[RMDB]
RNA sequence: GGGAACGACUCGAGUAGAGUCGAAAAUGGCAAAGGAUGUGCGUCCGCGCAGACAACCAGGAGGUUGGCUUAGAAGCAGCCACCCCUUCAAAGAGUGCGUAACAGCUCACUGGUCGAGUGGACAUGCGUAUUUUUUAGGAUUCGUCCUAAAAAAUACAAAAGAAACAACAACAACAAC
Reactivity to 2A3 in 0.01 (KOAc 150mM, MgCl2 10mM, bicine 150mM(pH8.5), 24C), signal-to-noise 9, nucleotides 027 to 126: u100g060g000c070a040a020a080g110g030a100u110g050u040g080c020g020u000c010c010g000c000g010c050a010g020a040c010a020a040c030c030a010g020g020a040g030g020u090u090g010g010c000u060u030a080g040a260a030g100c040a000g000c000c000a010c020c010c000c000u040u040c030a050a060a010g050a010g010u060g020c070g070u080a100a040c030a060g020c010u010c020a040c020u040g010g030u030c010g020a040g020u030g010g010a020c020a040u100g020c040
Reactivity to DMS in 0.01 (KOAc 150mM, MgCl2 10mM, bicine 150mM(pH8.5), 24C), signal-to-noise 9, nucleotides 027 to 126: u010g010g030c040a080a090a100g010g000a070u010g020u010g010c080g000u010c020c020g010c040g020c130a110g010a060c300a100a040c060c050a040g000g010a060g010g010u010u010g010g000c010u000u010a100g010a140a130g010c280a040g000c000c000a050c030c030c010c020u000u010c120a050a130a080g000a060g010u000g000c070g010u010a110a130c140a140g010c000u000c040a100c020u000g000g010u000c020g000a070g020u000g000g000a020c050a050u010g000c160